[RMDB]
This 177-nucleotide RNA was probed chemically with 2A3.
RNA sequence: GGGAACGACUCGAGUAGAGUCGAAAAGAAAGCGUCAUUCGACGAAAGAGAAGAUAAUGGCGCAUUAGGUUACGUGCGCAACCUAAUCAGCGCACGACAAGAAAUCUCAUUCGCAGAAAUAAGAAAAGCACUCAGUCAGUUUCGACUGACUGAGUGCAAAAGAAACAACAACAACAAC
Reactivity to 2A3 in 0.01 (KOAc 150mM, MgCl2 10mM, bicine 150mM(pH8.5), 24C), signal-to-noise 1, nucleotides 027 to 126: g030a000a100a010g000c000g020u000c000a000u000u080c010g140a250c060g120a030a230a000g170a000g090a160a000g010a090u070a030a000u200g000g000c000g000c000a000u030u170a000g000g000u030u040a000c000g000u040g040c000g000c000a000a000c000c000u000a030a030u110c140a140g000c000g000c000a000c000g000a010c000a000a060g100a050a300a010u100c060u000c000a040u280u020c030g000c030a110g100a000a170a000u100a000a060g180a120a150a000a000